[RMDB]
RNA sequence: GGGAACGACUCGAGUAGAGUCGAAAAGAUAUGGAAGUGCGUGAUGCGUAACCCCUACAUGGAGGGAGCUCUCGGAAACGAGAGGCUCCCGUUGAAAUGUAGGGGUUACGCUGACACUUCCUAAGUCCAAUAUCCCGUUCUUCGGAACGGGAUAUUGAAAAGAAACAACAACAACAAC
Reactivity to DMS in 0.01 (KOAc 150mM, MgCl2 10mM, bicine 150mM(pH8.5), 24C), signal-to-noise 2, nucleotides 027 to 126: g010a080u000a300u000g000g000a010a000g020u000g020c220g020u000g020a070u010g000c020g020u000a000a010c000c000c000c000u000a000c000a000u010g030g000a060g020g010g000a020g030c000u000c000u000c000g000g010a150a120a300c010g030a020g010a030g030g010c010u010c000c000c000g000u010u020g000a180a150a020u000g010u010a000g000g000g010g000u000u000a000c000g010c010u000g000a150c000a010c000u000u000c000c000u000a020a070g030u020c030
Chemical mapping of a 177-nucleotide RNA with DMS. For DMS the reverse transcriptase was MarathonRT.